[RMDB]
The record gives the reactivity of an RNA of 207 nucleotides to 2A3 and DMS. For 2A3 the reverse transcriptase was SuperScript II with manganese. The DMS profile rests on 1,544 reads.
RNA sequence: GGGAACGACUCGAGUAGAGUCGAAAAUAGAAUCAUUUGGGAGUGCCUAGACAAAAUGAUUCUGGGUGCCACCCCACUGCCUCAGAUAUUCUGAACUUAAUUGAGGAUUCAGCAGAGAUAUUUUGAAGGAGACCUCCAAGAGAUUCUAGCAUGUAGCUGACCAUGAAGAAUUCGUUCUUCAUGGUCAAAAAGAAACAACAACAACAAC
Reactivity to 2A3 in 0.01 (KOAc 150mM, MgCl2 10mM, bicine 150mM(pH8.5), 24C), signal-to-noise 2, nucleotides 027 to 156: u060a000g020a010a010u040c010a040u070u130u080g010g010g010a060g020u030g030c000c000u010a020g000a020c050a090a300a040a090u170g050a100u070u040c000u000g000g000g020u080g000c000c010a160c020c010c000c020a010c010u060g010c050c020u020c010a000g010a010u040a020u080u060c010u010g000a060a060c010u040u040a010a150u130u180g210a070g090g080a010u000u070c020a010g030c030a020g020a000g010a110u030a040u070u100u160u090g060a040a010g010g010a000g000a050c010c050u000c050c110a060a020g040a000g040a100u070u020c000u020a000g020c030a050u300g030u300a010g000c100
Reactivity to DMS in 0.01 (KOAc 150mM, MgCl2 10mM, bicine 150mM(pH8.5), 24C), signal-to-noise 1, nucleotides 027 to 156: u000a050g000a070a040u000c000a100u000u020u010g020g000g010a060g000u020g020c050c020u000a100g020a260c020a070a050a020a110u020g010a220u000u000c020u000g020g030g040u000g040c000c060a190c070c060c030c070a090c170u010g000c050c010u000c010a020g030a150u000a090u020u000c000u010g020a080a120c050u010u020a060a170u010u000g000a190g000g000a200u010u000c040a060g020c220a040g000a150g020a110u000a030u000u000u000u000g030a120a090g000g010a190g000a040c050c020u000c020c020a080a150g010a040g020a070u000u000c000u010a090g030c070a160u010g000u000a090g000c100

The 2A3 profile rests on 615 reads. For DMS the reverse transcriptase was MarathonRT.